[RMDB]
Conditions: 150 mM KOAc, 10 mM MgCl2 and 150 mM bicine (pH 8.5), 24 C. An RNA of 177 nucleotides, treated with 2A3 and DMS and read out base by base. 2A3 adducts were read by reverse transcription with SuperScript II with manganese. For DMS, 1,337 sequencing reads were counted. The 2A3 profile rests on 926 reads.
RNA sequence: GGGAACGACUCGAGUAGAGUCGAAAAGGACAGCCAGCAUUUGGGGUUGAGGGUGCUCAGUGUGUGGGGCCUUGAAAGCUAGAUGUCUGAGUUGUGGCAUAACACAUGCAAUUGAAAUUUAGAACGGGGUAGACAACAAGUUCGCUUGUUGUCUACCAAAAGAAACAACAACAACAAC
Reactivity to 2A3 in 0.01 (KOAc 150mM, MgCl2 10mM, bicine 150mM(pH8.5), 24C), signal-to-noise 1, nucleotides 027 to 126: g020g010a000c020a010g000c000c010a020g000c000a000u040u020u060g080g000g000g000u060u100g040a060g010g020g000u140g200c000u000c020a080g020u060g000u050g080u130g230g000g030g000c000c000u030u070g090a020a020a000g080c000u010a000g000a050u020g120u170c000u010g050a050g080u040u040g000u040g060g000c030a040u170a300a030c080a000c010a110u050g010c030a000a050u120u040g110a140a020a140u080u130u170a090g040a120a010c050g150g030
Reactivity to DMS in 0.01 (KOAc 150mM, MgCl2 10mM, bicine 150mM(pH8.5), 24C), signal-to-noise 1, nucleotides 027 to 126: g000g000a020c050a040g050c010c020a040g000c020a080u000u000u000g000g000g010g060u000u010g000a120g040g000g010u000g000c040u000c030a080g000u000g040u030g020u010g020g000g000g020c000c020u000u000g010a020a050a070g000c000u010a020g000a020u000g000u030c000u010g010a130g000u000u000g010u000g010g010c010a040u000a090a100c190a070c150a030u000g010c030a080a140u020u000g000a050a130a110u000u000u000a080g030a060a100c160g030g000